[RMDB]
RNA sequence: GGGAACGACUCGAGUAGAGUCGAAAAAGAUUGAGAGUUACACAACAAGGUCAUAAAUUUGCGUUAUUAUGGUCAAUGGCGUCUUUUACAACAUCCAAAAUUAAAUGAAGAUAUGAUGGAUAGAGGAGAUGACCUAUGGAUUCGUCCAUAGGUCAUCAAAAGAAACAACAACAACAAC
Reactivity to 2A3 in 0.01 (KOAc 150mM, MgCl2 10mM, bicine 150mM(pH8.5), 24C), signal-to-noise 5, nucleotides 027 to 126: a000g130a050u180u210g040a060g020a020g120u120u100a060c090a020c010a050a140c030a090a090g010g020u040c010a030u050a060a050a150u100u120u130g040c060g080u110u030a060u090u030a030u090g100g000u060c010a070a060u060g030g000c020g050u020c030u020u080u040u040a090c110a120a010c010a020u010c020c020a000a060a110a070u150u140a020a090a060u250g120a070a080g040a070u040a050u240g080a060u070g030g020a010u050a070g090a030g060g030a080
Reactivity to DMS in 0.01 (KOAc 150mM, MgCl2 10mM, bicine 150mM(pH8.5), 24C), signal-to-noise 4, nucleotides 027 to 126: a100g000a100u040u010g000a090g000a170g000u030u010a110c130a060c080a090a060c150a140a120g000g000u020c010a020u010a000a060a040u000u050u000g000c190g000u020u000a090u030u020a000u020g000g000u000c020a060a110u000g030g010c160g000u000c010u000u000u000u000a050c110a080a130c170a010u040c000c000a090a010a140a010u000u000a030a050a080u040g030a160a080g000a100u030a020u000g000a190u000g030g000a010u010a060g000a300g000g000a150
The record gives the reactivity of an RNA of 177 nucleotides to 2A3 and DMS. For 2A3, 3,581 sequencing reads were counted. Source: RMDB library OK1LIB, as collected in RNAgym. DMS (dimethyl sulfate) methylates the pairing face of unpaired adenines and cytosines.